RNA sequence: GGGAACGACUCGAGUAGAGUCGAAAAGGCGGAAUCGGGUAGCGCGAGUAUUGCUUGAGUGUGGUCUCGAUGUGGGCAAGGGUGAUAUCCAUGGCACAGGCAUUCCAGAGGGAGAGGUCGUUGAUGCCUCUUACCGAUUGUUCGCAAUCGGUAAGAGAAAAGAAACAACAACAACAAC
Reactivity to 2A3 in 0.01 (KOAc 150mM, MgCl2 10mM, bicine 150mM(pH8.5), 24C), signal-to-noise 2, nucleotides 027 to 126: g030g000c010g030g050a040a070u080c010g040g030g060u050a030g010c040g010c020g060a010g050u110a070u100u140g020c030u050u070g050a070g140u110g100u060g020g080u010c000u030c080g060a090u080g030u080g010g010g050c020a060a060g020g020g000u050g010a040u030a030u150c040c070a050u080g000g010c020a020c040a090g030g020c010a020u160u000c020c040a030g030a040g110g030g010a040g000a020g000g020u020c030g040u050u100g020a070u110g020c000
Reactivity to DMS in 0.01 (KOAc 150mM, MgCl2 10mM, bicine 150mM(pH8.5), 24C), signal-to-noise 4, nucleotides 027 to 126: g020g000c070g030g010a110a060u000c040g000g000g020u000a120g010c090g010c030g000a090g040u000a080u000u000g020c040u000u010g010a130g030u000g030u000g010g000u000c020u000c090g010a100u000g020u020g010g000g020c070a090a060g000g000g030u000g000a090u000a070u010c040c050a070u010g000g020c040a030c100a070g000g010c070a090u000u010c040c060a130g010a150g010g020g010a040g010a050g000g020u010c050g020u010u000g010a110u010g000c110